Overview
This 177-nucleotide RNA was probed chemically with 2A3 and DMS. For DMS, 4,878 sequencing reads were counted. It was measured as part of the RMDB library TTRDES. Conditions: 150 mM KOAc, 10 mM MgCl2 and 150 mM bicine (pH 8.5), 24 C.

RNA sequence: GGGAACGACUCGAGUAGAGUCGAAAAGAUAUGGAACCAGCCAGACAUGCUUAAUUCUCGGAAACGAGAAUAAUAAGCAACAGCUGGCCUGGUUCCUAAGUCAAAGGCUGAUCUUCGGAUCAGCCAAGACGUGAAUAAACUUCGGUUUAUUCACGUCAAAAGAAACAACAACAACAAC
Reactivity to 2A3 in 0.01 (KOAc 150mM, MgCl2 10mM, bicine 150mM(pH8.5), 24C), signal-to-noise 4, nucleotides 027 to 126: g000a010u020a020u100g000g000a010a010c010c000a000g020c000c000a000g020a100c090a270u300g000c000u030u030a040a010u050u020c000u000c000g030g010a030a030a020c000g010a010g020a000a000u040a010a020u070a030a000g030c090a150a090c100a150g040c000u000g000g010c000c010u000g000g000u000u010c000c000u000a020a010g000u010c050a120a100a070g010g000c000u010g000a010u000c000u040u140c300g150g000a000u000c000a000g000c000c000a000a000
Reactivity to DMS in 0.01 (KOAc 150mM, MgCl2 10mM, bicine 150mM(pH8.5), 24C), signal-to-noise 4, nucleotides 027 to 126: g000a030u000a220u010g010g000a020a000c000c000a030g000c000c000a010g000a050c140a160u020g010c010u000u000a080a060u000u000c000u000c010g010g000a030a050a090c000g000a020g010a000a000u000a040a120u000a010a000g000c000a100a100c290a170g000c010u000g000g000c120c130u000g010g010u000u000c000c000u010a000a070g000u000c010a130a120a120g010g020c000u000g010a010u000c000u000u020c270g000g000a010u000c000a010g000c000c010a010a020